This 177-nucleotide RNA was probed chemically with 2A3 and DMS. It was measured as part of the RMDB library TTRINS. Conditions: 150 mM KOAc, 10 mM MgCl2 and 150 mM bicine (pH 8.5), 24 C. The 2A3 profile rests on 11,410 reads. Reactivities are given for positions 27 through 126.
RNA sequence: GGGAACGACUCGAGUAGAGUCGAAAAGAUAUGGACGUUAGGGAGCACUAAUUCUACGAGGAUCCGUUGAGUCGGAAACGACUCAACGGGGAGUAGAGAUAGUGCGAAGAACUAACGUCCUAAGUCAGUCAGUACUUAAGUUCGCUUAAGUACUGACAAAAGAAACAACAACAACAAC
Reactivity to 2A3 in 0.01 (KOAc 150mM, MgCl2 10mM, bicine 150mM(pH8.5), 24C), signal-to-noise 3, nucleotides 027 to 126: g030a020u050a040u110g000g000a000c010g000u010u010a020g030g050g100a260g060c000a000c000u020a090a080u100u030c000u010a030c030g120a300g210g000a000u000c000c000g000u000u000g020a000g000u000c000g000g000a020a040a040c030g010a010c010u010c000a000a000c010g000g000g000g000a010g000u010a000g000a010g000a030u030a020g010u010g040c070g030a030a010g060a020a020c010u000a000a000c010g000u000c000c000u000a000a000g000u000c030a010
Reactivity to DMS in 0.01 (KOAc 150mM, MgCl2 10mM, bicine 150mM(pH8.5), 24C), signal-to-noise 3, nucleotides 027 to 126: g010a030u000a210u000g000g000a000c000g000u000u000a000g000g000g000a160g030c000a010c000u010a020a110u010u000c010u000a000c010g000a110g020g010a020u000c010c000g010u000u000g000a010g010u000c000g010g010a060a030a080c000g020a010c000u000c000a000a010c000g010g010g010g000a010g010u000a000g010a020g000a040u000a000g040u010g020c010g020a070a090g000a120a180c000u000a010a000c000g010u000c000c000u000a000a060g010u000c020a150